[RMDB]
RNA sequence: GGGAACGACUCGAGUAGAGUCGAAAACUGUUGCCGAUCUGGCGCAAGUACCGCUACCGGGUGAGCUUCCAGAGCGGCGCGAGCGAUGCGUUUUCCGCCCAAUUGUUCGCCCUCGUCGGAUUGGGCAGUCCAGUGAUGAUUUCGAUCAUCACUGGACAAAAGAAACAACAACAACAAC
Reactivity to DMS in 0.01 (KOAc 150mM, MgCl2 10mM, bicine 150mM(pH8.5), 24C), signal-to-noise 3, nucleotides 027 to 126: c060u010g010u010u010g020c000c000g000a050u010c040u000g020g000c300g020c180a040a070g010u000a040c050c020g020c060u010a080c210c120g000g000g000u000g010a280g010c060u000u010c050c060a050g010a060g000c010g010g020c120g000c030g010a090g030c070g010a090u000g020c060g010u010u000u000u000c030c060g020c000c020c000a050a100u010u000g020u000u010c000g000c000c050c030u010c110g000u000c030g000g000a030u000u000g020g020g010c020a080
Reactivity to 2A3 in 0.01 (KOAc 150mM, MgCl2 10mM, bicine 150mM(pH8.5), 24C), signal-to-noise 3, nucleotides 027 to 126: c020u040g080u240u280g020c000c000g030a060u040c010u050g000g000c010g000c090a050a060g080u110a160c010c040g100c200u170a160c090c040g090g000g010u060g000a040g040c020u130u070c050c040a010g030a020g020c030g000g020c010g000c010g010a030g030c070g090a090u210g010c000g020u000u000u090u070c040c020g010c000c010c000a040a040u080u060g070u080u030c030g000c010c020c040u080c030g070u020c030g050g000a040u040u040g040g000g000c000a000
Chemical mapping of a 177-nucleotide RNA with DMS and 2A3. For 2A3, 2,640 sequencing reads were counted. DMS adducts were read by reverse transcription with MarathonRT. Source: RMDB library OK2TST, as collected in RNAgym.